[RMDB]
RNA sequence: GGGAACGACUCGAGUAGAGUCGAAAAUAGGGUUCAGAGCAGUGGCUGCUACCUGAAGACCGCAGCCAUUUCUCUCUGGUCAUUCAUCUGAGUGAUGUGUCUAGUGAUCUACCGUGCACACCCAGAGAUAGAGACAUUUGUUCGCAAAUGUCUCUAUAAAAGAAACAACAACAACAAC
Reactivity to 2A3 in 0.01 (KOAc 150mM, MgCl2 10mM, bicine 150mM(pH8.5), 24C), signal-to-noise 2, nucleotides 027 to 126: u140a020g040g000g030u110u140c010a000g000a000g030c100a000g020u000g020g000c020u000g000c030u060a080c000c030u050g110a050a020g050a040c030c060g000c000a020g000c000c000a010u010u030u020c070u000c000u010c010u020g040g000u010c030a030u100u030c010a150u060c070u140g090a080g130u090g040a130u010g020u020g040u040c040u080a070g030u020g200a140u040c030u080a080c070c020g060u050g020c010a010c000a010c030c010c000a020g020a000g000
Reactivity to DMS in 0.01 (KOAc 150mM, MgCl2 10mM, bicine 150mM(pH8.5), 24C), signal-to-noise 4, nucleotides 027 to 126: u010a100g010g010g000u000u000c030a030g010a040g030c300a040g030u000g000g000c000u000g000c010u010a130c130c090u010g000a120a130g000a100c190c130g010c010a010g000c000c000a000u000u000u010c090u000c000u000c040u000g000g020u000c040a060u000u000c040a120u010c120u010g000a050g030u000g000a060u000g010u010g020u010c110u010a100g010u010g000a100u000c110u000a070c060c060g010u000g030c040a030c050a090c040c000c010a100g000a110g000
This 177-nucleotide RNA was probed chemically with 2A3 and DMS. The reactions ran in a buffer of 150 mM KOAc, 10 mM MgCl2 and 150 mM bicine (pH 8.5), at 24 C. 2A3 adducts were read by reverse transcription with SuperScript II with manganese. The DMS profile rests on 3,740 reads.